Structure probing data (DMS and 2A3) for a 207-nucleotide construct. The reactions ran in a buffer of 150 mM KOAc, 10 mM MgCl2 and 150 mM bicine (pH 8.5), at 24 C. Source: RMDB library ARCHII, as collected in RNAgym. For 2A3 the reverse transcriptase was SuperScript II with manganese. The 2A3 profile rests on 1,911 reads.
RNA sequence: GGGAACGACUCGAGUAGAGUCGAAAAAGGAUUAAACAGCAGGCCGUGGUCGCACCCAACCACGUUAAAUAGGGUGCAAAAACACAACUGCCAACGAAUACGCCUACGCUUUGGCAGCCUAAGCGUGCUGCCACGCACCUUUAGACCUUGCCUGUGGCCAUUUUAUUCUGUUCGCAGAAUAAAAUGGAAAAGAAACAACAACAACAAC
Reactivity to DMS in 0.01 (KOAc 150mM, MgCl2 10mM, bicine 150mM(pH8.5), 24C), signal-to-noise 1, nucleotides 027 to 156: a040g000g010a150u020u010a150a000a120c010a190g000c000a000g040g030c030c030g050u000g040g000u000c050g000c000a050c030c000c010a100a120c060c040a020c060g000u010u010a000a060a100u000a080g010g010g030u000g040c010a050a000a020a060a000c050a080c070a090a080c010u000g020c010c010a020a030c030g000a160a120u010a130c110g000c030c020u000a040c120g000c090u000u000u000g040g040c050a030g010c010c040u010a050a060g020c180g060u000g020c010u000g010c000c000a020c110g000c020a040c000c030u000u000u000a120g020a100c060c010u000u000g020c000c030u040g000u000g010g040
Reactivity to 2A3 in 0.01 (KOAc 150mM, MgCl2 10mM, bicine 150mM(pH8.5), 24C), signal-to-noise 2, nucleotides 027 to 156: a000g090g000a060u200u160a060a060a030c060a060g040c000a000g010g020c030c000g000u010g000g000u020c010g000c000a000c010c000c000a020a060c010c000a000c010g040u050u050a000a000a020u010a010g010g020g010u000g000c010a000a120a000a000a000c120a030c050a110a120c040u030g020c000c010a050a010c050g040a100a020u090a090c070g080c020c020u050a030c070g030c060u120u110u050g010g000c000a030g020c000c010u090a100a020g070c030g110u070g000c030u070g080c030c000a000c030g000c000a030c020c010u050u040u090a070g030a040c010c000u010u030g000c010c010u020g000u060g030g000